[RMDB]
RNA sequence: GGGAACGACUCGAGUAGAGUCGAAAACUGAUGUCUUUUAUUCAGGCAGACUCAUUUACUUGUAAUAAUAUUGAUGCUGCUAAGAUAUAUGGUAUGUGUUUUUCCAGCAUAACUAUAGAUAAGUUUGCUCAAGCAAUGUGUUCGCACAUUGCUUGAGAAAAGAAACAACAACAACAAC
Reactivity to DMS in 0.01 (KOAc 150mM, MgCl2 10mM, bicine 150mM(pH8.5), 24C), signal-to-noise 1, nucleotides 027 to 126: c040u000g010a170u000g000u000c040u010u010u020u000a020u000u010c060a240g010g000c010a060g000a060c040u010c010a020u000u000u010a020c100u010u010g000u020a160a160u000a030a030u000a020u000u000g010a000u010g010c000u000g000c020u000a030a110g000a020u000a000u000a040u000g010g000u000a080u010g000u000g000u000u020u020u000u010c050c020a300g010c020a030u020a020a040c020u010a140u000a060g020a060u010a100a040g000u000u000u020g010
Reactivity to 2A3 in 0.01 (KOAc 150mM, MgCl2 10mM, bicine 150mM(pH8.5), 24C), signal-to-noise 1, nucleotides 027 to 126: c020u050g050a120u140g030u010c030u010u300u020u110a010u040u110c050a000g070g000c000a000g040a140c020u000c020a010u100u090u140a080c000u060u040g120u190a170a170u110a180a000u090a180u080u110g020a020u040g000c020u000g000c040u040a060a000g030a020u080a000u010a000u040g010g010u020a050u020g000u020g050u010u050u040u040u000c000c000a000g000c000a010u080a220a030c050u060a050u050a080g060a040u070a220a090g060u030u070u060g120
Structure probing data (DMS and 2A3) for a 177-nucleotide construct. For 2A3, 779 sequencing reads were counted. The data come from the RNA Mapping Database (RMDB), library OK2TRN. The reactions ran in a buffer of 150 mM KOAc, 10 mM MgCl2 and 150 mM bicine (pH 8.5), at 24 C.